RNA sequence: GGGAACGACUCGAGUAGAGUCGAAAAAAUGACCACGCUUCGUGGUUCAUGAAAUUGACCGUCAGCCCGGUGACGAUCAAUUUUUACGCGACGCUGACCUCCUUCUUCGCCACCUUAGCCCUGAUGGCAAUAUGCGACCUUUCGAGGUCGCAUAUUGAAAAGAAACAACAACAACAAC
Reactivity to 2A3 in 0.01 (KOAc 150mM, MgCl2 10mM, bicine 150mM(pH8.5), 24C), signal-to-noise 1, nucleotides 027 to 126: a000a000u080g010a010c010c000a000c060g060c220u230u280c090g030u000g040g020u050u120c010a000u020g020a050a000a030u050u010g040a020c020c000g000u000c010a050g000c000c030c000g070g000u060g030a000c000g020a010u010c040a040a010u000u040u030u070u100a100c090g040c070g080a030c030g000c100u130g060a140c020c000u000c000c000u070u040c000u100u080c090g110c070c000a050c000c030u050u100a010g020c000c000c030u040g050a060u010g050g010
Reactivity to DMS in 0.01 (KOAc 150mM, MgCl2 10mM, bicine 150mM(pH8.5), 24C), signal-to-noise 2, nucleotides 027 to 126: a070a040u000g000a070c020c010a030c020g010c300u000u000c050g050u000g000g000u000u010c070a030u000g010a040a030a020u000u000g000a040c010c000g000u010c010a040g010c020c010c010g000g000u000g020a010c020g000a020u010c010a010a000u010u010u000u000u000a080c120g000c070g000a060c100g010c040u010g000a100c020c030u000c010c030u000u010c070u000u010c060g020c020c030a060c040c020u000u000a110g010c020c000c020u000g010a080u010g010g010

An RNA of 177 nucleotides, treated with 2A3 and DMS and read out base by base.
Conditions: 150 mM KOAc, 10 mM MgCl2 and 150 mM bicine (pH 8.5), 24 C.
The 2A3 profile rests on 1,039 reads.
The data come from the RNA Mapping Database (RMDB), library OK2TRN.